Chemical mapping of a 177-nucleotide RNA with 2A3 and DMS. It was measured as part of the RMDB library OK2TST. For 2A3 the reverse transcriptase was SuperScript II with manganese.

RNA sequence: GGGAACGACUCGAGUAGAGUCGAAAAUUGAUACUGUCAGGCGUCGCUCUUUGUGCUUCCAGAGCUCUGAUAGUUACAUACCGCCUCUGGCAGUUGCAUGAACGAAAAGUCAGCGAACCCGAGCAGGUACUAUCUGGGAUUUCGAUCCCAGAUAGUAAAAAGAAACAACAACAACAAC
Reactivity to 2A3 in 0.01 (KOAc 150mM, MgCl2 10mM, bicine 150mM(pH8.5), 24C), signal-to-noise 2, nucleotides 027 to 126: u120u080g020a000u050a150c010u010g000u020c010a030g030g060c060g090u070c030g000c020u000c000u050u030u090g030u030g030c000u120u000c030c020a010g000a040g100c060u060c020u250g040a050u030a040g000u020u060a020c010a010u070a040c000c030g020c000c020u030c030u020g040g000c000a030g010u120u130g030c050a070u060g050a070a000c010g040a300a010a000a000g090u090c020a010g020c010g020a040a020c000c010c020g000a030g040c010a020g100g000
Reactivity to DMS in 0.01 (KOAc 150mM, MgCl2 10mM, bicine 150mM(pH8.5), 24C), signal-to-noise 4, nucleotides 027 to 126: u010u020g010a200u010a070c010u000g010u000c020a040g010g010c200g000u010c090g000c030u000c020u000u000u010g010u010g010c020u000u000c060c060a020g010a080g000c120u020c050u010g010a030u010a030g010u010u020a130c110a120u010a050c030c020g000c290c010u000c030u000g010g000c100a020g010u010u020g030c030a050u000g020a050a060c100g000a060a070a090a100g010u010c070a040g010c030g010a120a130c040c000c020g020a140g010c100a050g010g020